[RMDB]
This 177-nucleotide RNA was probed chemically with 2A3. The data come from the RNA Mapping Database (RMDB), library OK1LIB. The RNA was probed in 150 mM KOAc, 10 mM MgCl2 and 150 mM bicine (pH 8.5) at 24 C. For 2A3, 525 sequencing reads were counted.

RNA sequence: GGGAACGACUCGAGUAGAGUCGAAAAUGUCUCUUAAAGCCACUAAGACUUCUUCUUUUUCCAAGUCUUCAACUUCUUUGCCUCUUGGAGCUCUGGUAAUGUAAUCUACUUCUCCCACUUGCAAGAGCCAGCCAUUAGGCUUCGGCCUAAUGGCUGGAAAAGAAACAACAACAACAAC
Reactivity to 2A3 in 0.01 (KOAc 150mM, MgCl2 10mM, bicine 150mM(pH8.5), 24C), signal-to-noise 2, nucleotides 027 to 126: u130g000u010c010u000c000u040u130a170a040a150g000c070c020a060c090u110a060a060g020a180c010u020u060c000u040u000c000u110u200u010u030u030c010c070a060a100g040u000c000u090u060c110a110a110c030u080u030c000u120u080u120g040c010c060u050c000u050u060g010g010a010g010c040u020c000u030g020g050u100a160a070u110g120u090a030a000u110c120u040a110c050u090u000c000u000c000c020c000a000c000u050u060g000c060a030a030g000a060g110